This 177-nucleotide RNA was probed chemically with 2A3 and DMS.
RNA sequence: GGGAACGACUCGAGUAGAGUCGAAAAAGGAAAGGCCUCUGAGUUGCUGGCACAGGAAUGGAAGCAGGCAGAUAGAGGGUUCUUGCAGCUGUCCAAGGUAGAGGCAGUGGAAGCUUGCGCUCAGUAGCCAAAGUCUAGUGUUCGCACUAGACUUUGGAAAAGAAACAACAACAACAAC
Reactivity to 2A3 in 0.01 (KOAc 150mM, MgCl2 10mM, bicine 150mM(pH8.5), 24C), signal-to-noise 4, nucleotides 027 to 126: a000g120g020a060a020a010g050g030c010c000u000c020u000g030a030g050u090u220g090c010u010g040g010c040a020c020a080g080g050a090a070u090g050g010a050a020g060c010a020g060g050c020a000g030a110u160a050g170a130g010g060g030u040u020c020u010u040g000c020a050g000c000u040g020u070c040c010a070a070g120g000u110a060g090a120g100g000c020a000g000u050g060g040a090a000g000c020u050u050g000c030g010c020u020c000a050g030u110a040g060
Reactivity to DMS in 0.01 (KOAc 150mM, MgCl2 10mM, bicine 150mM(pH8.5), 24C), signal-to-noise 4, nucleotides 027 to 126: a090g000g010a130a090a070g000g000c010c000u000c000u020g030a070g020u000u010g030c060u010g000g000c080a300c060a020g020g020a110a090u010g000g000a160a100g000c090a040g020g000c060a040g020a110u030a080g010a120g030g000g010u010u000c010u010u000g010c070a130g010c030u020g020u010c000c000a140a110g020g030u020a080g010a110g020g020c010a010g020u000g000g020a130a120g000c010u000u010g010c040g010c010u000c030a070g000u040a060g000

For 2A3, 3,173 sequencing reads were counted. The reactions ran in a buffer of 150 mM KOAc, 10 mM MgCl2 and 150 mM bicine (pH 8.5), at 24 C.